[RMDB]
RNA sequence: GGGAACGACUCGAGUAGAGUCGAAAAAGAUGCAGCUGAAAUCGGUUCCACUUCUAGCGUUAGUCUUACCAGCGGUUCAUCUCUGUCCUCAGGCUCAAGCUUUUCCUUUAAGACUGACAGAAAUUUGAAUAGCACCGAGCAAGAAUAUCUAAAAACAGCAGACUGUGGUUUUCGAACCACAGUCUGCAAAAGAAACAACAACAACAAC
Reactivity to 2A3 in 0.01 (KOAc 150mM, MgCl2 10mM, bicine 150mM(pH8.5), 24C), signal-to-noise 1, nucleotides 027 to 156: a000g050a040u040g000c080a070g000c100u050g050a130a000a000u100c030g000g000u080u000c040c070a090c050u060u040c050u060a050g000c070g000u030u060a040g040u020c000u030u050a090c040c050a040g090c030g060g030u040u080c000a050u000c050u020c010u030g050u110c020c040u000c000a010g000g090c010u010c020a040a040g010c020u040u070u080u110c030c000u030u080u060a040a110g020a070c050u130g010a030c010a000g200a060a180a010u230u260u120g010a020a000u050a080g010c030a040c050c000g000a000g030c010a090a000g030a100a080u190a030u090c120u260a110a050a030a000a020c020a000